[RMDB]
RNA sequence: GGGAACGACUCGAGUAGAGUCGAAAAUUCACACACACACGAGAAUCGAAACGAUUACUCUAGAAGGAUAGGUUUCAUCCCUUCUUCCUGUCCGUUCCUGACGUUGACUCGUGAGCAACUAACUUCCGGUUUGGGUAAUGUUCGCAUUACCCAAACCAAAAGAAACAACAACAACAAC
Reactivity to 2A3 in 0.01 (KOAc 150mM, MgCl2 10mM, bicine 150mM(pH8.5), 24C), signal-to-noise 5, nucleotides 027 to 126: u030u020c010a030c000a020c000a000c000a000c010a000c070g010a000g040a060a090u070c040g080a150a090a090c050g030a060u010u210a170c010u030c020u020a050g030a070a010g070g000a030u060a040g050g030u020u090u150c070a040u070c020c000c000u040u030c040u030u010c010c000u010g020u020c020c020g030u010u030c010c000u020g050a050c060g040u000u050g020a080c020u010c100g040u030g090a030g050c020a030a050c020u130a040a040c010u100u040c020c060
Reactivity to DMS in 0.01 (KOAc 150mM, MgCl2 10mM, bicine 150mM(pH8.5), 24C), signal-to-noise 2, nucleotides 027 to 126: u000u020c020a020c080a030c090a050c150a130c070a000c060g040a150g000a030a060u010c100g000a120a080a120c060g010a050u010u020a030c040u000c000u000a060g000a110a070g000g000a010u010a030g000g010u010u000u010c180a080u000c070c030c010u000u020c060u000u010c020c050u000g000u000c000c000g010u000u000c040c000u000g010a100c100g000u000u020g000a180c020u010c100g000u000g000a100g000c050a030a020c080u020a020a100c100u000u000c140c140